[RMDB]
RNA sequence: GGGAACGACUCGAGUAGAGUCGAAAAGAUAUGGAACCUCACGGACAUGAGCCCAAUCGGAAACGAUUGUGAGCUCAACAGCCGUAGGUUCCUAAGUCAAAGUCUGGCCCGUUCGCGGGCCAGACAACAGUUGAUUAAAGUUCGCUUUAAUCAACUGAAAAGAAACAACAACAACAAC
Reactivity to 2A3 in 0.01 (KOAc 150mM, MgCl2 10mM, bicine 150mM(pH8.5), 24C), signal-to-noise 2, nucleotides 027 to 126: g000a000u020a000u040g000g010a000a010c000c020u100c090a040c050g020g000a040c220a300u300g010a010g000c030c000c000a010a000u010c000g010g000a000a000a030c030g000a000u030u040g080u200g130a070g000c000u010c010a050a100c040a010g020c010c000g000u000a000g000g000u000u000c000c000u000a010a010g000u020c010a150a030a060g000u000c000u000g010g020c160c060c040g070u090u070c300g020c010g150g030g030c030c000a010g000a020c000a010a000
Reactivity to DMS in 0.01 (KOAc 150mM, MgCl2 10mM, bicine 150mM(pH8.5), 24C), signal-to-noise 2, nucleotides 027 to 126: g010a020u000a040u010g000g000a010a010c000c000u000c300a000c020g000g000a020c090a160u010g010a000g030c000c000c000a010a000u000c000g000g010a020a020a020c010g020a020u000u000g000u010g030a150g050c010u000c000a100a100c160a140g000c000c000g000u000a000g000g010u000u000c000c010u000a010a040g000u000c000a190a150a100g010u000c000u000g030g000c000c000c000g040u000u000c190g030c010g030g020g000c000c000a000g010a000c010a040a100